[RMDB]
An RNA of 207 nucleotides, treated with 2A3 and read out base by base. Values are in units of 0.01, from 0 to 300, in steps of 10.
RNA sequence: GGGAACGACUCGAGUAGAGUCGAAAACGUGCGCGCUGCGCCCUACAGGUAUCUACGGCGAGGGUCACGAUCUGAUGUUGGAGUUCUACGAGCGUGCGAAGCGCUGUCGCAACAAGUGUCUGCCACGCAGCGUGGAUCCCUCUGUGGAGCACGGACGGUAGGGAUCCGUAUUCGUACGGAUCCCUACAAAAGAAACAACAACAACAAC
Reactivity to 2A3 in 0.01 (KOAc 150mM, MgCl2 10mM, bicine 150mM(pH8.5), 24C), signal-to-noise 1, nucleotides 027 to 156: c010g000u060g070c140g000c060g010c000u300g060c000g040c000c020c000u260a160c120a120g030g030u140a120u120c020u070a000c000g010g000c020g000a050g100g000g000u060c000a000c040g000a040u200c010u170g140a160u170g040u200u100g030g000a020g180u040u000c000u000a040c010g030a010g000c000g020u050g000c040g000a090a000g020c010g000c050u030g150u090c000g000c020a050a030c010a240a160g040u000g020u230c000u040g090c040c000a000c060g000c000a000g090c090g000u090g000g000a000u100c000c000c040u010c010u010g250u260g020g000a120g000c000a000c000g070g050a040c100g020